RNA sequence: GGGAACGACUCGAGUAGAGUCGAAAAAAGGUGGAUUAGAAUGAGAAGGAUUCUGUACACAGAGCAGAUGCAGUGAAGACGACCAGGGAAGGAUGGCUUCCUCAAAGCAAAUAGAGCAAAGCCGGUGACUGUUACGAUGUUUCGACAUCGUAACAGUAAAAGAAACAACAACAACAAC
Reactivity to 2A3 in 0.01 (KOAc 150mM, MgCl2 10mM, bicine 150mM(pH8.5), 24C), signal-to-noise 1, nucleotides 027 to 126: a030a000g000g000u020g000g060a020u060u080a070g050a120a060u050g000a020g030a110a040g060g010a010u090u090c030u050g020u060a060c100a030c040a090g070a020g000c020a000g010a110u120g000c000a010g070u000g120a100a000g070a060c050g020a030c020c000a020g040g050g000a000a050g050g020a060u130g010g050c040u050u010c000c000u030c040a100a050a030g040c000a010a030a180u160a090g050a030g000c020a090a040a000g000c050c040g000g000u060g030
Reactivity to DMS in 0.01 (KOAc 150mM, MgCl2 10mM, bicine 150mM(pH8.5), 24C), signal-to-noise 2, nucleotides 027 to 126: a040a090g020g020u010g010g000a070u000u010a020g010a090a030u000g000a180g010a110a140g010g000a090u000u000c020u000g000u000a120c070a130c130a080g000a070g030c050a020g020a070u000g000c040a070g020u000g010a080a070g000a100c060g010a030c040c070a070g000g010g020a080a080g000g010a150u010g020g000c020u000u000c190c040u000c060a030a100a060g000c140a050a030a100u010a060g000a060g020c020a030a020a110g030c020c020g000g020u000g010

The data come from the RNA Mapping Database (RMDB), library OK2TRN. This 177-nucleotide RNA was probed chemically with 2A3 and DMS. As a SHAPE reagent, 2A3 marks flexible, mostly unpaired nucleotides at the ribose 2'-OH. For DMS the reverse transcriptase was MarathonRT.